[RMDB]
RNA sequence: GGGAACGACUCGAGUAGAGUCGAAAAGCUAGGCAUUUCGAUGCCUAGCGAGCGCAGAGUCUAUGCAUCUCUGAAUCACACAACUGCCGUGUCUAUGCGUGGGAGUAUCCCUCUUCGGAGGGAUAAAUCUAACGUGUUCUUUCGAGAACACGUUAGAAAAAGAAACAACAACAACAAC
Reactivity to DMS in 0.01 (KOAc 150mM, MgCl2 10mM, bicine 150mM(pH8.5), 24C), signal-to-noise 4, nucleotides 027 to 126: g010c000u000a010g000g010c000a010u000u000u020c150g010a030u000g010c000c000u000a000g010c010g000a060g030c110g010c010a050g010a070g010u000c060u000a130u010g000c070a060u010c050u010c050u010g000a130a120u010c130a050c140a050c090a070a090c130u000g000c040c040g010u000g000u000c070u000a050u010g000c060g020u000g020g000g000a110g010u000a020u000c000c000c000u000c000u010u020c190g030g010a030g010g000g000a000u000a010a070a090
Reactivity to 2A3 in 0.01 (KOAc 150mM, MgCl2 10mM, bicine 150mM(pH8.5), 24C), signal-to-noise 3, nucleotides 027 to 126: g010c000u000a000g020g010c000a010u020u080u160c230g110a010u010g020c000c000u010a010g000c000g010a030g000c070g000c010a020g030a000g050u030c040u110a130u210g030c020a100u040c030u000c030u060g110a130a090u140c030a040c010a010c000a090a130c070u070g060c040c020g060u010g030u090c070u130a050u170g030c010g010u020g040g000g000a070g020u030a020u000c000c020c000u000c020u010u020c130g110g000a010g000g000g000a000u000a000a020a000
Background
Source: RMDB library M2PK50, as collected in RNAgym. An RNA of 177 nucleotides, treated with DMS and 2A3 and read out base by base. Values cover nucleotides 27 to 126.